[RMDB]
RNA sequence: GGGAACGACUCGAGUAGAGUCGAAAAGAUAUGGAUGUAACCUGGCGAUAAGAAUGGUUCGGAAACGAACCCAUUCUUUUGACGCCAGUGUUACAUCCUAAGUCAAAGGAACGGUUCGCCGUUCCAAGAUGUAUCGGGUCUUCGGACCCGAUACAUCAAAAGAAACAACAACAACAAC
Reactivity to 2A3 in 0.01 (KOAc 150mM, MgCl2 10mM, bicine 150mM(pH8.5), 24C), signal-to-noise 1, nucleotides 027 to 126: g070a040u070a010u130g020g000a000u000g010u000a010a000c000c000u000g000g000c020g110a110u010a170a000g010a000a020u020g000g030u020u050c020g010g000a050a140a070c010g010a070a000c050c000c000a010u000u010c010u010u010u030u080g120a110c070g000c000c010a000g000u000g010u000u010a000c010a020u020c000c010u000a010a010g010u000c030a050a080a160g020g000a010a010c050g000g160u110u150c300g030c140c020g020u020u010c000c010a010a020
Reactivity to DMS in 0.01 (KOAc 150mM, MgCl2 10mM, bicine 150mM(pH8.5), 24C), signal-to-noise 1, nucleotides 027 to 126: g000a030u000a300u000g010g050a000u000g010u000a020a010c000c010u010g020g020c020g070a260u000a000a000g000a030a000u000g000g020u000u000c010g020g000a160a120a270c030g010a020a010c140c020c050a010u000u000c000u000u000u000u000g020a130c080g000c020c000a010g030u020g000u000u000a000c000a010u000c000c000u000a000a090g000u000c030a070a120a240g020g000a000a020c010g020g000u020u030c290g000c000c000g020u000u000c000c010a050a040